[RMDB]
RNA sequence: GGGAACGACUCGAGUAGAGUCGAAAACAAUCCGCAGCCAAGUCCUAAGGUGCAGGAGACUUCUCUCCUGCACUAUGGAUGCAGUUCAACGACUAGACGGUGAUGGGCUAGCGUAAUGAAUGCGUUCUGCACACUCUUACGCCGGCUUAAGAUAUAGGGUGUACCAUAAGUUCGCUUAUGGUACACCAAAAGAAACAACAACAACAAC
Reactivity to 2A3 in 0.01 (KOAc 150mM, MgCl2 10mM, bicine 150mM(pH8.5), 24C), signal-to-noise 3, nucleotides 027 to 156: c020a000a050u050c020c050g060c040a020g060c000c040a110a010g020u000c010c000u080a130a050g030g000u000g000c000a000g070g000a000g010a060c150u300u000c060u150c000u000c100c000u000g020c000a000c000u000a000u000g000g000a000u010g040c000a010g010u090u110c090a110a070c060g130a030c030u040a080g050a050c020g040g030u070g030a120u150g000g030g000c000u020a010g000c000g010u000a010a010u100g010a220a300u030g010c050g140u300u190c110u280g000c010a000c000a000c000u000c000u000u000a000c030g000c010c020g020g000c000u020u050a040a060g100a080u130a040u110a180g140
Reactivity to DMS in 0.01 (KOAc 150mM, MgCl2 10mM, bicine 150mM(pH8.5), 24C), signal-to-noise 1, nucleotides 027 to 156: c090a110a020u000c030c130g000c030a010g030c050c020a030a230g000u000c010c010u030a170a150g020g000u000g020c010a000g000g050a050g000a080c160u000u010c130u000c010u000c010c010u000g030c000a000c010u000a230u040g000g010a090u000g000c120a130g030u000u000c080a100a180c000g000a080c060u000a100g050a210c060g020g040u010g010a220u000g030g010g030c000u000a010g070c000g020u000a020a040u020g010a070a020u030g000c020g070u000u020c100u010g020c080a000c010a040c010u000c000u000u000a010c010g000c000c000g020g020c010u000u000a070a090g030a200u000a070u010a120g010
This 207-nucleotide RNA was probed chemically with 2A3 and DMS.
Source: RMDB library ARCHII, as collected in RNAgym.
The reactions ran in a buffer of 150 mM KOAc, 10 mM MgCl2 and 150 mM bicine (pH 8.5), at 24 C.
For 2A3, 1,770 sequencing reads were counted.